The record gives the reactivity of an RNA of 177 nucleotides to DMS and 2A3. The data come from the RNA Mapping Database (RMDB), library OK2TST.
RNA sequence: GGGAACGACUCGAGUAGAGUCGAAAAUUGGGUAAACUUCACCGCAUUGGUGGCAAGGUUGAGCAGAAUCUGCUGCACCGCGCGGCGAUCAGCCACGAGUUCACCCACACCAUUGCCAACCCGGUGAGGGCGAGUAAUGAUUCGUCAUUACUCGCCCAAAAGAAACAACAACAACAAC
Reactivity to DMS in 0.01 (KOAc 150mM, MgCl2 10mM, bicine 150mM(pH8.5), 24C), signal-to-noise 2, nucleotides 027 to 126: u000u000g020g000g020u010a070a030a080c050u000u000c020a020c000c000g010c260a180u010u040g020g010u010g000g010c010a020a030g050g030u000u000g000a050g040c020a110g000a090a130u010c050u010g010c000u000g000c030a050c040c020g010c080g020c040g000g000c000g010a110u030c160a160g000c060c090a040c110g000a080g000u010u000c010a030c000c000c000a040c230a060c040c010a110u000u000g000c040c060a080a200c040c040c020g020g000u000g010a190
Reactivity to 2A3 in 0.01 (KOAc 150mM, MgCl2 10mM, bicine 150mM(pH8.5), 24C), signal-to-noise 1, nucleotides 027 to 126: u090u040g000g010g020u100a080a080a040c030u030u020c060a030c020c020g090c150a230u060u150g040g000u010g030g000c070a120a150g030g000u100u170g040a010g000c020a010g010a120a170u110c090u150g000c000u040g100c070a060c060c000g080c020g030c080g050g000c000g050a100u160c080a070g020c010c000a050c040g000a010g030u000u070c020a020c000c000c050a000c010a000c010c000a150u070u100g050c000c030a110a120c020c020c030g000g000u060g000a050